[RMDB]
RNA sequence: GGGAACGACUCGAGUAGAGUCGAAAAGUGUCGGAGAAGGGUUUUGAGAAUGUAGCAAUUUUUAUUAAUUGUGUUAUAGCUUGAGACUUGGAUACGAUGCUUUGGAUUGAGGAACGCGUAGUAAGCUCUCACAACAUACUUUCGAGUAUGUUGUGAGAAAAGAAACAACAACAACAAC
Reactivity to DMS in 0.01 (KOAc 150mM, MgCl2 10mM, bicine 150mM(pH8.5), 24C), signal-to-noise 5, nucleotides 027 to 126: g020u000g030u000c000g000g000a020g000a300a210g010g000g010u000u000u000u000g000a020g000a020a090u020g010u000a300g000c000a010a000u000u000u000u040u050a110u070u010a010a000u000u000g010u000g000u010u010a020u000a060g010c010u000u000g000a010g000a010c000u010u000g000g010a290u000a010c010g000a010u000g000c000u000u000u010g010g010a150u000u000g010a090g020g010a060a060c110g000c120g010u000a060g000u010a060a110g000c110u000
Reactivity to 2A3 in 0.01 (KOAc 150mM, MgCl2 10mM, bicine 150mM(pH8.5), 24C), signal-to-noise 6, nucleotides 027 to 126: g010u000g020u010c000g010g020a100g010a110a020g010g000g000u000u010u020u020g050a040g000a110a100u110g010u050a020g000c010a010a000u000u010u010u040u110a280u230u250a060a010u010u020g010u000g060u070u080a110u070a070g020c000u000u010g000a000g000a000c000u010u010g010g000a000u010a060c000g000a000u000g000c000u000u010u030g030g020a050u020u110g040a040g060g080a100a040c060g030c030g040u080a040g070u050a100a060g030c030u000